[RMDB]
RNA sequence: GGGAACGACUCGAGUAGAGUCGAAAAAUGGUACUUUUGCUGACUACGUUUCGCUUGCUGCUCUCAAUUGCAACAACACGAAAUAUCAUUGCAAAUGAGGAUGUUGGUCAGGUAAUCGAAACCGUCAAUCGCAUAGGAUAUUCGUAUCCUAUGCGAUAAAAGAAACAACAACAACAAC
Reactivity to 2A3 in 0.01 (KOAc 150mM, MgCl2 10mM, bicine 150mM(pH8.5), 24C), signal-to-noise 8, nucleotides 027 to 126: a000u110g030g000u090a070c020u040u070u050u090g090c060u040g020a010c010u030a040c090g030u020u030u050c020g000c010u010u060g020c020u040g010c000u000c000u000c050a040a100u040u020g000c010a010a040c010a050a040c070a040c140g160a060a090a050u240a060u100c060a030u010u040g000c020a020a030a040u030g000a020g050g040a090u150g110u300u090g090g020u080c050a040g060g040u030a020a020u030c010g010a080a010a010c010c010g010u020c030a020
Reactivity to DMS in 0.01 (KOAc 150mM, MgCl2 10mM, bicine 150mM(pH8.5), 24C), signal-to-noise 9, nucleotides 027 to 126: a060u010g010g020u010a100c040u000u000u000u000g010c100u000g010a030c020u000a090c210g020u010u000u000c080g020c190u000u000g010c050u000g010c040u010c100u000c070a040a060u000u000g020c000a000a020c090a080a120c250a060c110g010a050a050a080u010a070u010c120a130u000u000g010c090a010a020a070u000g000a020g000g020a080u010g010u000u010g010g010u000c030a080g010g010u000a020a020u000c030g010a050a040a050c020c070g000u000c110a080